This 170-nucleotide RNA was probed chemically with 2A3 and DMS. It was measured as part of the RMDB library 15KLIB.
[RMDB]
RNA sequence: GGGAACGACUCGAGUAGAGUCGAAAAACCUCGGAGGUUCCCUCCCAAGAAGGUUCAAGAGAAUACAAGAAAUGGAGGAAUUUCCCCAUAACGCCGGUGAAACUCUUGGAAGCGGAAGAAGGAAGGCACACAUAGGUGUUCGCACCUAUGAAAAGAAACAACAACAACAAC
Reactivity to 2A3 in 0.01 (KOAc 150mM, MgCl2 10mM, bicine 150mM(pH8.5), 24C), signal-to-noise 9, nucleotides 027 to 129: a020c010c000u010c030g040g000a020g000g000u050u060c010c000c000u020c000c000c000a040a030g050a050a020g060g000u100u140c020a020a010g030a000g030a080a060u130a120c040a050a020g050a070a100a030u150g020g010a030g030g030a050a040u050u040u070c020c000c000c010a040u080a150a050c090g030c060c020g010g000u090g030a080a030a030c020u040c000u030u040g030g010a030a010g050c040g030g010a010a020g000a000a000g020g010a000a000g020g000c040a010c010a000
Reactivity to DMS in 0.01 (KOAc 150mM, MgCl2 10mM, bicine 150mM(pH8.5), 24C), signal-to-noise 9, nucleotides 027 to 129: a040c050c030u000c090g000g010a030g040g020u020u020c040c050c010u000c020c030c030a150a080g010a060a030g010g010u010u030c040a030a080g000a050g030a050a020u030a120c080a040a050g010a040a070a040u040g000g000a060g000g010a080a090u020u010u010c020c010c000c130a070u050a090a080c170g030c040c050g000g010u040g000a050a050a070c020u000c040u030u000g020g020a050a080g000c080g000g000a030a030g000a040a020g000g010a010a000g000g000c110a080c120a110